[RMDB]
RNA sequence: GGGAACGACUCGAGUAGAGUCGAAAAGAGAUCUCGAUCGAGUGUGAGAGAACUCACUCUCACGUUCACGAACACGAGUGAGUGUACACUCGUUCACGAGAACACACACACGAUCGAGUGAGAGUGAGUACUCUCUCGAGAGAGUGAGUACACUCUCCCUAGAAGCUGAGUUCGCUCAGCUUCUAGGAAAAGAAACAACAACAACAAC
Reactivity to 2A3 in 0.01 (KOAc 150mM, MgCl2 10mM, bicine 150mM(pH8.5), 24C), signal-to-noise 4, nucleotides 027 to 156: g080a000g030a060u030c000u000c030g040a040u030c020g010a030g030u100g030u080g040a020g010a010g000a120a080c010u010c020a000c000u010c000u000c010a030c030g040u150u130c100a040c110g050a080a030c080a020c140g040a050g020u000g000a050g010u070g020u070a100c100a020c030u020c010g050u210u160c150a120c140g020a030g000a020a000c000a000c000a000c010a000c000a020c020g040a040u050c050g020a020g020u020g010a000g000a000g000u010g010a000g010u050a040c010u010c000u000c000u000c010g020a040g000a000g000a000g010u010g010a020g060u090a040c030a010c030u030c000u010c000
Reactivity to DMS in 0.01 (KOAc 150mM, MgCl2 10mM, bicine 150mM(pH8.5), 24C), signal-to-noise 1, nucleotides 027 to 156: g010a150g010a130u010c000u000c020g010a080u000c000g000a100g080u010g030u000g000a030g010a060g000a140a070c010u000c010a060c020u000c000u010c050a050c020g030u000u000c060a250c060g030a070a060c070a170c000g060a180g020u000g030a210g060u020g030u010a250c160a120c090u020c000g000u030u000c170a040c090g000a060g000a080a090c060a180c050a060c000a040c060a150c030g060a120u020c070g000a080g030u000g000a020g000a030g030u000g040a100g000u010a020c010u000c000u020c000u000c010g000a200g060a190g000a040g010u000g000a100g030u020a180c070a090c020u000c020u000c000
This 207-nucleotide RNA was probed chemically with 2A3 and DMS. For 2A3 the reverse transcriptase was SuperScript II with manganese. It was measured as part of the RMDB library OK3TST. Reactivities are given for positions 27 through 156. For 2A3, 3,090 sequencing reads were counted.